Conditions: 150 mM KOAc, 10 mM MgCl2 and 150 mM bicine (pH 8.5), 24 C. The record gives the reactivity of an RNA of 207 nucleotides to DMS and 2A3. For 2A3, 11,038 sequencing reads were counted. Values cover nucleotides 27 to 156. 2A3 adducts were read by reverse transcription with SuperScript II with manganese. High DMS reactivity at an A or C suggests that its Watson-Crick edge is free.
[RMDB]
RNA sequence: GGGAACGACUCGAGUAGAGUCGAAAAAGCCAUACCAUUACGAUGGUAUGGCAAGGCCGUGACGGCGAUGGAUCCCGCCUGGCCGAUGCCGAACUGCCGAUCUGGCUGAUGGUUCCUGCCCCGUCAAAAAACGUAAAGCACUUCGGUGCUUUACGAACAAUAUUCAUGACUUCGGUCAUGAAUAUUGAAAAGAAACAACAACAACAAC
Reactivity to DMS in 0.01 (KOAc 150mM, MgCl2 10mM, bicine 150mM(pH8.5), 24C), signal-to-noise 3, nucleotides 027 to 156: a150g030c000c000a030u000a000c000c010a010u000u000a090c250g010a160u000g000g000u000a010u000g000g010c000a010a000g000g010c000c020g010u010g010a100c040g030g010c030g000a120u000g010g000a120u010c040c010c020g040c030c030u010g010g020c020c050g000a100u000g000c000c020g010a110a080c070u000g020c040c010g010a160u000c060u010g030g020c010u000g010a090u000g010g000u000u000c020c020u000g010c040c060c020c020g000u010c030a010a050a110a090a070a130c020g020u000a000a020a010g010c010a020c000u000u010c300g040g020u000g000c000u000u000u000a010c010g010a030a080
Reactivity to 2A3 in 0.01 (KOAc 150mM, MgCl2 10mM, bicine 150mM(pH8.5), 24C), signal-to-noise 6, nucleotides 027 to 156: a000g000c000c000a010u000a000c000c000a010u060u040a060c280g080a020u010g000g000u010a000u010g000g000c000a000a020g030g000c010c010g060u060g020a040c010g000g020c070g020a030u080g030g010a040u040c020c010c000g020c020c050u050g010g000c010c020g020a040u140g060c040c030g090a140a090c090u100g020c000c010g080a150u060c070u110g010g000c020u040g040a110u110g020g000u020u030c000c000u030g020c010c000c000c010g000u000c000a020a030a020a020a060a070c010g000u000a000a000a000g000c000a000c010u040u100c210g080g000u000g000c000u000u000u000a000c000g000a010a000